[RMDB]
RNA sequence: GGGAACGACUCGAGUAGAGUCGAAAAACAACUCUGGGGAGAAAAGGGAGGAUCGGAUGGGAAAAGUAUAUCCCAUGGGAAUCCCUGUGUCCCUCUCACGUCCAGCCCCUCCCCGUGUCUAUGGAAGCAAUUUUAGUUGGUUCGCCAACUAAAAUUGAAAAGAAACAACAACAACAAC
Reactivity to DMS in 0.01 (KOAc 150mM, MgCl2 10mM, bicine 150mM(pH8.5), 24C), signal-to-noise 3, nucleotides 027 to 126: a050c160a080a060c160u010c070u010g010g010g020g020a050g020a070a080a160a080g000g010g010a120g000g000a160u010c040g020g010a020u010g010g010g000a020a060a100a170g030u020a070u010a050u000c010c010c000a030u000g000g000g010a300a110u000c020c010c030u000g010u010g000u000c040c010c010u000c060u000c040a070c150g030u010c020c020a040g010c050c030c010c000u010c000c000c000c010g010u000g010u000c090u000a050u000g000g000a160a110g010
Reactivity to 2A3 in 0.01 (KOAc 150mM, MgCl2 10mM, bicine 150mM(pH8.5), 24C), signal-to-noise 1, nucleotides 027 to 126: a000c090a030a090c040u060c030u140g050g000g040g010a070g030a000a210a050a000g030g000g000a000g000g010a090u150c070g040g110a070u020g030g000g040a080a040a050a210g110u050a040u030a060u190c010c040c020a030u030g020g020g070a030a030u030c040c000c020u010g030u060g020u040c000c000c000u030c000u020c000a030c030g070u000c000c010a040g010c000c000c000c000u020c000c020c010c000g000u020g020u050c040u040a060u070g030g030a060a040g020
Source: RMDB library VIROID, as collected in RNAgym. Structure probing data (DMS and 2A3) for a 177-nucleotide construct. The RNA was probed in 150 mM KOAc, 10 mM MgCl2 and 150 mM bicine (pH 8.5) at 24 C. For DMS the reverse transcriptase was MarathonRT.